This 207-nucleotide RNA was probed chemically with 2A3. Conditions: 150 mM KOAc, 10 mM MgCl2 and 150 mM bicine (pH 8.5), 24 C. Source: RMDB library OK3TST, as collected in RNAgym.

RNA sequence: GGGAACGACUCGAGUAGAGUCGAAAAACCUCUGGCUGUAUAGGAUGUGAGGUUCCUAAACCAUAACCUAAAGAGGUUGUGCAAAAAUUUUCUACAGAGUAGGCUCUCAGUGCCCUCCAGGGGUCACAUGCUGUAAUGCAUCAUCCCCAUAUUUUCACCAGUCGUAUUAGUUCGCUAAUACGACUGGAAAAGAAACAACAACAACAAC
Reactivity to 2A3 in 0.01 (KOAc 150mM, MgCl2 10mM, bicine 150mM(pH8.5), 24C), signal-to-noise 2, nucleotides 027 to 156: a000c010c000u000c030u040g070g000c030u010g060u050a110u040a120g020g000a030u030g040u050g080a130g030g040u030u030c040c000u040a080a000a020c050c010a010u040a010a030c010c010u210a280a200a030g150a160g060g000u000u030g040u010g000c040a000a050a070a150a290u090u160u240u020c060u110a050c050a000g050a060g160u080a040g030g020c000u010c000u000c090a060g080u040g120c000c000c000u050c020c010a010g000g000g080g000u040c010a060c000a070u040g000c010u050g080u210a060a020u170g060c000a000u030c010a030u030c000c000c030c020a080u140a100u150u170u100u080c030a030